[RMDB]
RNA sequence: GGGAACGACUCGAGUAGAGUCGAAAAGUAUCAAGGAAAUGGAGCAGUUCACCCAGGUGGCCAAGGCCUACCAGGACCGCUAUCAGGACCUGGGGGCCUACAGUUCUGCCAGGAAGUGCCUGGCCAAACAGAGGCAGAGGAUGCUGCAAGAGAGAAAAUUAAAAUCGUAUUUCGAUACGAUUUUAAUAAAAGAAACAACAACAACAAC
Reactivity to DMS in 0.01 (KOAc 150mM, MgCl2 10mM, bicine 150mM(pH8.5), 24C), signal-to-noise 2, nucleotides 027 to 156: g010u010a070u000c060a070a080g010g010a050a140a100u000g010g020a140g000c050a070g000u000u000c070a120c070c030c010a110g010g020u000g000g020c030c030a160a080g010g000c000c010u010a130c020c010a060g010g010a110c010c000g000c170u000a150u000c110a060g000g000a160c020c010u000g000g010g000g040g010c000c000u000a000c050a060g020u000u000c040u020g040c040c020a050g010g000a060a210g030u000g030c070c000u010g000g020c030c040a030a080a070c090a140g020a130g000g030c030a110g010a060g030g000a130u000g000c020u010g000c000a070a100g000a110g000a110g000a070a080a110
Reactivity to 2A3 in 0.01 (KOAc 150mM, MgCl2 10mM, bicine 150mM(pH8.5), 24C), signal-to-noise 2, nucleotides 027 to 156: g100u050a030u220c030a060a080g050g050a030a070a110u120g040g030a050g000c010a030g020u080u080c020a080c020c000c030a040g060g060u040g040g000c000c020a040a030g010g000c000c000u060a300c120c010a010g010g010a060c000c000g020c080u120a140u300c110a170g010g040a070c000c000u000g000g010g000g000g000c000c000u000a000c000a000g010u010u100c030u040g000c000c010a020g040g010a170a060g080u010g140c000c000u000g000g000c000c000a050a000a000c030a030g030a070g030g010c000a000g000a070g070g000a030u090g000c040u030g000c030a100a000g050a000g020a020g020a010a000a150
The record gives the reactivity of an RNA of 207 nucleotides to DMS and 2A3. Reactivities are given for positions 27 through 156. For DMS the reverse transcriptase was MarathonRT. The 2A3 profile rests on 881 reads. The reactions ran in a buffer of 150 mM KOAc, 10 mM MgCl2 and 150 mM bicine (pH 8.5), at 24 C. The data come from the RNA Mapping Database (RMDB), library OK3TST.